[RMDB]
RNA sequence: GGGAACGACUCGAGUAGAGUCGAAAAAGACGGAAACCCACCGACUGUCACCAGAUGCUGCAUCACCUGAUCACUGAUGGCUCAACGGUAUCCGGCGGUACAACUGAAUACUUGUAGCUGCCUUUUGAAAAGGAGUUCAUCUUCGGAUGAACUCCAAUCCUCUAGUUAGGUUCGCCUAACUAGAGGAAAAAGAAACAACAACAACAAC
Reactivity to DMS in 0.01 (KOAc 150mM, MgCl2 10mM, bicine 150mM(pH8.5), 24C), signal-to-noise 2, nucleotides 027 to 156: a150g000a080c040g000g000a090a060a150c010c010c020a090c020c010g020a160c030u020g020u000c040a070c040c020a030g020a070u010g010c040u010g000c040a080u020c050a040c020c020u000g010a160u000c100a140c070u000g000a110u010g010g050c000u000c030a090a100c010g010g010u000a060u000c010c010g010g050c010g010g050u000a070c100a060a100c050u010g000a130a070u000a000c050u000u000g020u000a060g040c010u020g000c020c060u000u000u010u000g020a070a070a130a260g030g010a050g010u000u000c000a000u000c000u000u010c260g060g020a010u010g030a000a000c000u000c000c010a010a020
Reactivity to 2A3 in 0.01 (KOAc 150mM, MgCl2 10mM, bicine 150mM(pH8.5), 24C), signal-to-noise 4, nucleotides 027 to 156: a000g040a020c080g030g020a060a100a070c010c000c000a010c020c010g060a070c050u070g030u100c030a040c090c010a040g070a130u060g040c020u050g040c010a060u040c010a060c020c020u080g040a060u080c030a010c060u030g020a040u030g080g000c010u020c060a100a090c070g010g020u040a110u050c030c040g010g000c020g010g000u030a020c000a020a010c040u190g100a120a100u100a130c040u010u040g010u030a030g100c000u010g010c000c030u070u130u090u160g110a110a110a010a030g010g000a000g000u000u010c010a000u010c000u010u020c090g090g000a000u000g000a000a000c000u000c000c000a000a000
An RNA of 207 nucleotides, treated with DMS and 2A3 and read out base by base.
For 2A3 the reverse transcriptase was SuperScript II with manganese.
DMS (dimethyl sulfate) methylates the pairing face of unpaired adenines and cytosines.
For DMS the reverse transcriptase was MarathonRT.
The DMS profile rests on 4,485 reads.
It was measured as part of the RMDB library M2RFPK.